[RMDB]
This 177-nucleotide RNA was probed chemically with DMS and 2A3. Conditions: 150 mM KOAc, 10 mM MgCl2 and 150 mM bicine (pH 8.5), 24 C. DMS adducts were read by reverse transcription with MarathonRT. 2A3 adducts were read by reverse transcription with SuperScript II with manganese. It was measured as part of the RMDB library OK2TST. The 2A3 profile rests on 3,258 reads.

RNA sequence: GGGAACGACUCGAGUAGAGUCGAAAACUUCAAUAGGAUAUGAGAGUGCUUUUACACAACCUCAAGAACAGUUGUAUCAUAGCCCAGAUGACCAGAAUGUUACAUCAUUUGCUUCGCAUGUGUUAGAUAGUACUUUCCUUUUCGAAGGAAAGUACUAAAAAGAAACAACAACAACAAC
Reactivity to DMS in 0.01 (KOAc 150mM, MgCl2 10mM, bicine 150mM(pH8.5), 24C), signal-to-noise 8, nucleotides 027 to 126: c050u010u010c080a080a110u010a110g010g010a110u010a060u000g010a070g010a090g030u010g010c070u000u010u010u010a090c080a050c050a060a080c110c050u000c090a070a090g010a090a090c120a080g010u000u000g000u000a070u000c030a050u010a080g010c030c030c030a080g000a060u000g000a060c060c060a080g010a050a060u010g000u000u000a050c080a040u000c040a060u000u000u000g010c070u000u000c100g010c070a050u000g020u000g000u000u010a080g010a180
Reactivity to 2A3 in 0.01 (KOAc 150mM, MgCl2 10mM, bicine 150mM(pH8.5), 24C), signal-to-noise 4, nucleotides 027 to 126: c010u080u050c010a030a100u100a230g060g030a070u040a070u280g060a080g010a020g020u080g020c010u130u080u170u270a040c070a000c010a050a080c040c040u090c070a030a060g060a080a010c010a060g010u040u010g040u090a040u070c030a020u070a020g000c020c000c020a030g040a100u030g020a030c000c040a020g070a140a080u080g030u080u120a060c020a040u070c000a040u030u020u090g030c000u080u010c040g040c080a020u040g020u010g020u100u030a050g020a190